RNA sequence: GGGAACGACUCGAGUAGAGUCGAAAAAGCAACGAGUGUGUGUGGGACGUUUUAUGCCAAGCUCUGAGUAGAGCACGCGCUCACACACACCGCGAGCGAGCAUCAGCAGAGCGCAAACGCUGGUAAAUAUCGCAAUAAAGUUCGCUUUAUUGCGAUAAAAAGAAACAACAACAACAAC
Reactivity to 2A3 in 0.01 (KOAc 150mM, MgCl2 10mM, bicine 150mM(pH8.5), 24C), signal-to-noise 5, nucleotides 027 to 126: a020g040c030a040a050c010g010a080g040u000g000u000g000u000g000u000g000g010g040a040c010g010u030u050u060u180a170u210g140c100c050a070a060g010c000u000c020u120g300a240g170u300a020g180a000g000c000a000c010g030c000g000c000u000c000a000c000a000c000a000c000a000c000c000g020c000g000a010g000c010g000a030g010c010a020u040c010a000g000c020a020g020a040g130c100g000c090a060a030a020c050g000c020u020g000g010u020a010a030a040
Reactivity to DMS in 0.01 (KOAc 150mM, MgCl2 10mM, bicine 150mM(pH8.5), 24C), signal-to-noise 9, nucleotides 027 to 126: a120g010c020a180a040c010g010a250g020u000g020u000g010u000g020u000g000g000g000a070c020g020u000u010u000u010a100u020g030c210c200a070a110g010c010u000c010u000g000a200g030u010a060g000a020g010c010a070c090g010c050g000c010u000c000a010c010a010c010a010c010a000c010c000g010c020g010a190g010c010g000a110g020c130a030u000c020a040g010c020a090g000a110g010c090g010c140a050a080a090c100g010c010u000g010g000u000a050a060a140